[RMDB]
RNA sequence: GGGAACGACUCGAGUAGAGUCGAAAAGAGCUUACGGUGUCUGAUAGCGUGCUAGUCUUUGAACUCACGGACAUAGUCCACUGCCGGAUGGCCGCCCCCAGCCAGCGGAAGGCCGUCCUAUCGACGCAUUAUCUAUGCGGUUCGCCGCAUAGAUAAUAAAAGAAACAACAACAACAAC
Reactivity to DMS in 0.01 (KOAc 150mM, MgCl2 10mM, bicine 150mM(pH8.5), 24C), signal-to-noise 6, nucleotides 027 to 126: g000a110g030c050u010u010a120c120g010g020u000g010u000c010u010g010a090u010a060g010c060g030u000g010c070u000a060g010u000c020u000u000u000g000a100a100c150u000c060a070c090g000g000a060c040a120u000a100g010u000c030c020a120c110u000g020c050c050g000g000a070u010g010g020c010c030g010c110c020c020c010c030a210g010c040c080a090g010c160g010g010a110a100g010g000c020c030g010u000c030c020u000a040u000c070g010a060c090g020c130
Reactivity to 2A3 in 0.01 (KOAc 150mM, MgCl2 10mM, bicine 150mM(pH8.5), 24C), signal-to-noise 4, nucleotides 027 to 126: g020a010g030c010u050u050a040c070g040g020u040g020u030c050u060g040a060u070a060g030c040g050u050g010c040u030a030g030u010c060u060u100u170g060a130a050c020u030c120a040c060g010g010a010c020a140u130a020g030u020c010c020a050c060u060g040c030c030g080g030a120u010g000g010c010c020g040c020c020c000c000c000a040g070c030c010a040g020c050g030g030a040a020g050g000c020c010g020u000c000c000u060a090u110c040g030a030c040g000c040
Annotation:
This 177-nucleotide RNA was probed chemically with DMS and 2A3. It was measured as part of the RMDB library OK2TRN. The DMS profile rests on 7,746 reads.